An RNA of 207 nucleotides, treated with 2A3 and DMS and read out base by base. 2A3 adducts were read by reverse transcription with SuperScript II with manganese. For 2A3, 1,220 sequencing reads were counted.
[RMDB]
RNA sequence: GGGAACGACUCGAGUAGAGUCGAAAAGAAGCAGUCCUUAUUGUGUGUGAUGUUUAGUCAUCGCACUGUCCCUACGGGCUGCCAACGUAGGUCCAAUGUGCCGAGAGGCACUAGAAGUACGGCUUAUUAUGAAGCAUCGCCGUACCAAUGAUGCUGACAUAAAUCCCGUGUUCGCACGGGAUUUAUGAAAAGAAACAACAACAACAAC
Reactivity to 2A3 in 0.01 (KOAc 150mM, MgCl2 10mM, bicine 150mM(pH8.5), 24C), signal-to-noise 3, nucleotides 027 to 156: g150a040a030g000c010a000g000u080c020c030u060u090a140u170u250g120u040g000u010g010u010g010a010u000g070u080u180u200a260g070u180c010a010u010c000g000c010a000c010u030g070u000c020c000c010u000a030c010g000g000g000c000u010g000c000c030a050a010c040g190u170a040g110g010u000c020c020a020a080u070g000u010g000c000c020g030a050g010a030g010g000c000a000c010u020a010g030a130a000g000u000a010c000g000g000c000u070u040a100u190u050a120u300g120a120a030g040c060a030u080c040g000c000c000g010u000a020c030c030a050a000u020g000a010u050g040c010u030g010a010
Reactivity to DMS in 0.01 (KOAc 150mM, MgCl2 10mM, bicine 150mM(pH8.5), 24C), signal-to-noise 2, nucleotides 027 to 156: g000a130a040g020c000a040g000u010c010c020u000u000a120u000u010g000u000g070u000g060u000g010a000u000g000u000u020u010a160g050u000c040a010u000c000g040c000a020c000u000g050u010c020c030c010u000a220c160g000g000g040c000u000g010c010c090a030a110c090g060u000a080g000g010u020c020c060a110a170u000g000u000g000c000c000g040a300g050a300g050g000c000a010c000u000a070g010a160a050g050u000a020c010g010g010c000u000u010a110u010u000a110u000g010a080a100g020c090a090u000c170g040c020c010g000u000a030c020c060a010a200u000g010a080u000g020c010u000g000a230
Values cover nucleotides 27 to 156.
The reactions ran in a buffer of 150 mM KOAc, 10 mM MgCl2 and 150 mM bicine (pH 8.5), at 24 C.